Source information: Structure probing data (DMS) for a 177-nucleotide construct. Source: RMDB library OK2TST, as collected in RNAgym. For DMS, 967 sequencing reads were counted. Conditions: 150 mM KOAc, 10 mM MgCl2 and 150 mM bicine (pH 8.5), 24 C. Reactivities are rounded to 0.1 and cut off at 0 and 3.
[RMDB]
RNA sequence: GGGAACGACUCGAGUAGAGUCGAAAAGUUGCUGCUAUCGCCUACACAGUGGUUCAGAUUGGUGCCAAGGUAGUCGAUAAGAUGAUUGACUGGAAGAAAGCCAAUAAGGAGUGAUAUGUAUGGAAAACGACUUUAGCUGUUUCGACAGCUAAAGUCGAAAAGAAACAACAACAACAAC
Reactivity to DMS in 0.01 (KOAc 150mM, MgCl2 10mM, bicine 150mM(pH8.5), 24C), signal-to-noise 1, nucleotides 027 to 126: g040u020u010g020c080u000g030c080u000a010u000c050g010c080c000u000a010c080a080c050a130g060u010g010g000u000u000c030a070g030a140u000u000g000g010u010g000c000c010a040a070g020g010u000a010g030u000c010g020a080u000a120a150g010a080u010g020a060u000u010g010a020c010u000g010g000a150a080g010a090a070a160g020c010c010a050a050u000a100a020g020g010a060g010u020g000a130u000a020u000g000u000a050u030g030g010a010a060a060a220